[RMDB]
Description:
This 177-nucleotide RNA was probed chemically with 2A3 and DMS. As a SHAPE reagent, 2A3 marks flexible, mostly unpaired nucleotides at the ribose 2'-OH. Values are in units of 0.01, from 0 to 300, in steps of 10.

RNA sequence: GGGAACGACUCGAGUAGAGUCGAAAACAGACUGUGGUGAAACCCGGGGACGCUGGGUGAUUGAAGGCGACCUGUCCAGUUACUUCGACACCGUACAUCAUCGACUGCUGAUGAAGGCUGUACGCCGGCAUAUUGCUUGCUUCGGCAAGCAAUAUGCAAAAGAAACAACAACAACAAC
Reactivity to 2A3 in 0.01 (KOAc 150mM, MgCl2 10mM, bicine 150mM(pH8.5), 24C), signal-to-noise 1, nucleotides 027 to 126: c030a000g100a070c010u080g040u110g130g010u040g000a130a010a000c020c000c000g030g020g020g060a030c060g000c120u080g000g000g120u060g060a100u000u060g070a040a070g020g060c050g000a030c010c000u010g050u060c010c010a010g030u040u060a010c000u000u070c020g000a020c040a010c020c000g040u080a010c010a100u120c000a020u090c000g050a040c100u110g010c030u080g010a070u050g030a020a060g090g000c000u000g040u040a050c050g050c040c000g010
Reactivity to DMS in 0.01 (KOAc 150mM, MgCl2 10mM, bicine 150mM(pH8.5), 24C), signal-to-noise 2, nucleotides 027 to 126: c050a090g020a110c050u000g010u000g000g020u000g020a070a160a080c030c000c030g000g010g020g000a090c200g000c040u020g010g000g040u000g010a100u020u010g000a050a070g000g010c190g000a060c020c010u010g030u020c040c110a120g000u000u000a100c070u010u000c040g010a080c050a000c120c020g020u010a070c080a070u000c030a020u000c030g020a130c120u000g000c110u090g020a040u000g020a060a040g000g020c020u000g030u000a110c120g000c070c030g000